Background:
The record gives the reactivity of an RNA of 177 nucleotides to DMS and 2A3. 2A3 adducts were read by reverse transcription with SuperScript II with manganese. For DMS the reverse transcriptase was MarathonRT. Conditions: 150 mM KOAc, 10 mM MgCl2 and 150 mM bicine (pH 8.5), 24 C.
RNA sequence: GGGAACGACUCGAGUAGAGUCGAAAAGUACAUCGGGGGCCGUAACCUCGUUACAGUAAUAACGACAGUGCUACGCUACACAGCGCCCAAACAGGUGCAAAAGUUUUGGGUAAACAAAAAUGGGGAAGAUCACAAAGUCAUUCGUGACUUUGUGAUCAAAAGAAACAACAACAACAAC
Reactivity to DMS in 0.01 (KOAc 150mM, MgCl2 10mM, bicine 150mM(pH8.5), 24C), signal-to-noise 4, nucleotides 027 to 126: g020u050a070c090a090u020c030g010g010g000g020g060c040c020g000u000a040a040c030c050u000c030g010u010u020a020c210a100g050u020a060a090u030a020a040c020g000a130c130a050g010u020g000c020u000a110c080g010c040u000a060c170a100c080a070g030c060g050c030c000c010a040a040a040c090a120g000g020u010g010c130a110a040a120a050g000u000u000u000u000g000g000g020u010a020a060a080c110a030a030a030a060a060u000g020g000g000g000a130a130
Reactivity to 2A3 in 0.01 (KOAc 150mM, MgCl2 10mM, bicine 150mM(pH8.5), 24C), signal-to-noise 5, nucleotides 027 to 126: g050u040a020c010a070u090c050g030g000g010g020g020c030c000g030u040a060a040c000c020u010c000g030u060u040a030c020a030g090u130a040a120u090a150a010c040g070a030c020a010g010u010g080c010u050a020c040g010c020u100a050c090a010c020a060g050c020g020c000c000c000a000a010a000c050a030g120g040u190g050c030a030a110a000a130g020u020u030u010u020g020g030g000u070a040a040a010c060a010a060a020a010a000u060g000g000g030g010a050a060

Annotation:
As a SHAPE reagent, 2A3 marks flexible, mostly unpaired nucleotides at the ribose 2'-OH. Reactivities are rounded to 0.1 and cut off at 0 and 3.